[RMDB]
RNA sequence: GGGAACGACUCGAGUAGAGUCGAAAAUGUAGUUCUUAACUACAAGUUUGUCUUAAAACUUUGUCUUAAAAACAAAGACAAAGUCUUAAAUAAUUUGUAUAGUUAUCAAAAUCAGGAAGUUAACAUUGAUAUACUAGUACCUAAUCUACAGACCUGAGCACCUAAUUACUUUCGAGUAAUUAGGUGCAAAAGAAACAACAACAACAAC
Reactivity to 2A3 in 0.01 (KOAc 150mM, MgCl2 10mM, bicine 150mM(pH8.5), 24C), signal-to-noise 1, nucleotides 027 to 156: u080g000u010a030g010u180u120c050u170u060a130a120c010u030a000c020a010a010g000u050u060u100g130u020c090u010u140a060a050a010a000c000u020u000u000g000u000c000u040u100a140a180a130a040a060c040a010a080a000g010a000c000a000a000a000g000u000c000u000u060a020a020a010u020a030a020u070u020u030g000u000a180u040a250g000u000u040a010u120c020a020a060a200a140u150c030a060g110g000a120a150g080u060u070a060a130c030a090u000u080g020a010u080a000u000a190c010u040a040g080u060a030c010c000u000a070a090u060c000u050a010c010a020g080a060c000c050u110g060a000